[RMDB]
RNA sequence: GGGAACGACUCGAGUAGAGUCGAAAAGAAACCUAGCGCUUACAAGCGGUCGGAGCCUACGGGUGACGGCGUGCCUUUUGCAUAAUGAGCCUACGAGUUGCUCCUCACUAGCAAGAUUAAGACUUUAUAAAUUAUAACCGUUCGCGGUUAUAAUUUAAAAAGAAACAACAACAACAAC
Reactivity to 2A3 in 0.01 (KOAc 150mM, MgCl2 10mM, bicine 150mM(pH8.5), 24C), signal-to-noise 4, nucleotides 027 to 126: g030a020a080a010c010c010u050a060g050c030g000c070u060u130a040c090a140a060g010c000g030g000u020c000g000g020a010g020c000c000u070a100c210g050g000g020u040g040a010c010g000g020c010g040u080g020c010c020u100u150u120u110g030c010a040u060a130a100u190g040a010g030c000c000u030a040c030g020a040g060u040u040g020c020u000c030c000u030c020a050c030u030a050g040c040a110a030g020a100u110u160a060a020g000a040c000u040u040u000a090
Reactivity to DMS in 0.01 (KOAc 150mM, MgCl2 10mM, bicine 150mM(pH8.5), 24C), signal-to-noise 4, nucleotides 027 to 126: g000a120a150a110c020c030u010a060g020c070g010c010u010u050a100c180a090a140g020c010g010g030u010c010g010g000a200g000c010c000u000a080c180g020g000g010u010g020a270c060g010g010c050g030u010g010c100c030u000u000u000u010g040c080a040u030a080a100u010g010a110g000c040c020u000a080c100g000a050g000u000u010g010c040u010c000c010u000c090a090c120u020a060g000c110a090a080g000a130u010u010a060a110g010a110c000u000u000u000a080